Source: RMDB library OK3TST, as collected in RNAgym.
Structure probing data (2A3 and DMS) for a 207-nucleotide construct.
The 2A3 profile rests on 1,223 reads.
Reactivities are given for positions 27 through 156.
The RNA was probed in 150 mM KOAc, 10 mM MgCl2 and 150 mM bicine (pH 8.5) at 24 C.
RNA sequence: GGGAACGACUCGAGUAGAGUCGAAAACAGUGCCCCCAGUUGCAUAGCUCUGGGAGAUGACAUCCACCUUGAAUCUCCACAGUGGAACCUCUAGGGCUAUAACUUAGCGUCCAAUGUUAUGUUACCACCUGAAGUUGCACAAGGGGCCCUGGAUGAAUAAUUAGCAAAAUUUCGAUUUUGCUAAUUAAAAAGAAACAACAACAACAAC
Reactivity to 2A3 in 0.01 (KOAc 150mM, MgCl2 10mM, bicine 150mM(pH8.5), 24C), signal-to-noise 2, nucleotides 027 to 156: c000a000g020u020g010c000c000c020c000c000a020g020u200u030g020c030a020u010a080g010c000u040c030u050g060g030g000a020g020a050u110g020a030c010a060u000c010c020a040c040c020u000u060g090a130a060u040c070u050c120c030a030c000a030g040u040g060g170a300a300c010c010u000c010u010a020g000g000g040c000u010a010u020a020a020c010u020u020a000g020c000g040u030c070c050a060a160u160g020u070u010a030u050g000u010u020a130c020c040a060c030c000u030g050a100a030g050u110u040g000c000a000c000a060a070g000g000g000g010c040c000c000u020g010g030a030u070g040a130a010
Reactivity to DMS in 0.01 (KOAc 150mM, MgCl2 10mM, bicine 150mM(pH8.5), 24C), signal-to-noise 3, nucleotides 027 to 156: c030a080g030u000g000c020c000c000c000c070a140g020u000u000g050c010a140u000a060g010c020u000c020u000g030g020g010a070g010a060u000g010a110c040a150u000c030c030a050c060c040u000u010g030a240a140u000c040u000c060c030a110c160a090g010u000g000g000a040a220c030c010u010c020u000a100g020g010g010c010u000a060u000a080a080c050u000u000a040g020c080g040u000c100c130a110a120u000g000u000u000a030u000g000u000u000a050c050c050a100c040c020u000g000a090a120g010u000u000g000c010a050c020a140a090g000g020g040g030c000c040c010u000g020g000a090u000g000a130a190